[RMDB]
About this RNA: The record gives the reactivity of an RNA of 177 nucleotides to DMS and 2A3. For DMS, 6,010 sequencing reads were counted. The RNA was probed in 150 mM KOAc, 10 mM MgCl2 and 150 mM bicine (pH 8.5) at 24 C. It was measured as part of the RMDB library OK2TRN. For DMS the reverse transcriptase was MarathonRT. For 2A3 the reverse transcriptase was SuperScript II with manganese.
RNA sequence: GGGAACGACUCGAGUAGAGUCGAAAAAAGUAAACGCAAAUAUGGUAAAAUGUACCAUACUUCCACAAAAUUGCACGGUAGCAAUCACAAAAUCAUUAUCAUUUUCUCCGUAUUGUAGGGUUAAAAACGUAGUACUUUUAUUCGUAAAAGUACUACGAAAAGAAACAACAACAACAAC
Reactivity to DMS in 0.01 (KOAc 150mM, MgCl2 10mM, bicine 150mM(pH8.5), 24C), signal-to-noise 5, nucleotides 027 to 126: a090a060g010u010a050a070a100c120g000c090a070a060a100u000a010u000g000g000u000a030a080a110a100u010g010u000a040c020c020a020u010a030c090u010u000c040c030a080c130a050a050a110a060u010u000g000c040a050c120g000g020u000a090g020c040a020a030u010c090a070c120a050a060a040a050u010c050a060u000u010a060u010c060a070u000u010u000u000c050u000c020c050g010u000a050u000u000g010u000a070g000g010g010u000u000a040a050a060a090a100
Reactivity to 2A3 in 0.01 (KOAc 150mM, MgCl2 10mM, bicine 150mM(pH8.5), 24C), signal-to-noise 6, nucleotides 027 to 126: a000a010g140u130a100a060a010c050g000c090a040a010a060u060a010u030g020g000u060a090a150a130a180u190g070u050a020c010c000a010u000a040c030u070u000c020c020a060c040a090a140a050a070u040u040g010c030a010c090g080g010u040a030g000c020a020a020u070c020a030c020a110a140a050a050u070c030a050u040u190a060u100c040a040u020u080u100u040c050u020c030c010g050u070a060u060u080g070u050a050g030g030g040u040u080a060a060a010a010a000